This 177-nucleotide RNA was probed chemically with 2A3 and DMS.
The 2A3 profile rests on 31,545 reads.
For DMS the reverse transcriptase was MarathonRT.

[RMDB]
RNA sequence: GGGAACGACUCGAGUAGAGUCGAAAAACAGCGGCGGAAGUGACCCAUUAGUGACCGAGGCGGCCCCUGCCCAAUCGCAAAAGCAGGAUGGCCAGAUCCUUACCGUCGGGUCCCAGCUCGCUGUAGCGCCUAACAUAGAUUUCGAUCUAUGUUAGGCAAAAGAAACAACAACAACAAC
Reactivity to 2A3 in 0.01 (KOAc 150mM, MgCl2 10mM, bicine 150mM(pH8.5), 24C), signal-to-noise 9, nucleotides 027 to 126: a000c000a000g010c000g030g000c020g050g090a160a070g110u090g130a010c010c010c010a050u110u260a120g170u130g080a030c070c090g010a020g000g000c010g010g000c010c000c000c000u010g000c000c010c020a070a110u220c140g050c200a070a110a020a000g000c010a000g020g030a100u190g040g000c000c010a000g010a040u070c000c000u010u040a060c030c050g030u040c000g000g000g000u000c000c010c000a030g010c060u140c080g000c000u000g000u010a020g040c070
Reactivity to DMS in 0.01 (KOAc 150mM, MgCl2 10mM, bicine 150mM(pH8.5), 24C), signal-to-noise 7, nucleotides 027 to 126: a050c020a030g010c000g010g010c010g010g020a180a130g020u000g010a030c000c000c010a210u010u010a130g020u020g000a040c060c100g000a050g000g010c140g010g010c010c010c010c000u000g000c010c030c060a090a120u000c250g010c240a050a090a160a150g000c020a010g000g000a120u000g010g000c000c010a070g000a060u000c000c000u000u000a080c160c100g000u010c080g000g010g000u010c000c020c030a150g010c020u020c020g020c010u000g010u000a040g020c180